[RMDB]
RNA sequence: GGGAACGACUCGAGUAGAGUCGAAAAAGUGCUUCAAUGGAAACAUUAAGCACCAUGUUGGUGCAAUGACCUUUGGAUAACCCUUUUUAUGCUCCGUGAAAGCGAUCACAAAGGGACUCUGCAAUACUUGUUUGCUAACGGAUUGUUCGCAAUCCAAUAAUGUACGUGCGUUCGCGCACGUACAUUAAAAAGAAACAACAACAACAAC
Reactivity to 2A3 in 0.01 (KOAc 150mM, MgCl2 10mM, bicine 150mM(pH8.5), 24C), signal-to-noise 1, nucleotides 027 to 156: a000g040u020g000c010u040u040c080a000a020u030g010g000a050a080a030c000a000u000u020a090a030g000c000a010c010c010a120u210g070u070u130g000g060u020g000c010a000a040u090g050a150c000c000u000u000u030g050g000a050u060a140a140c020c010c000u080u000u000u000u000a170u120g120c020u040c070c110g090u100g120a060a040a020g030c040g020a070u080c050a010c020a170a010a010g020g000g100a220c020u040c060u070g010c010a020a070u040a240c040u060u120g070u140u020u070g120c020u020a030a000c090g000g020a000u000u000g000u030u100c150g000c150a000a000u000c000c000a000a010

This 207-nucleotide RNA was probed chemically with 2A3. Source: RMDB library RFM130, as collected in RNAgym. For 2A3, 641 sequencing reads were counted.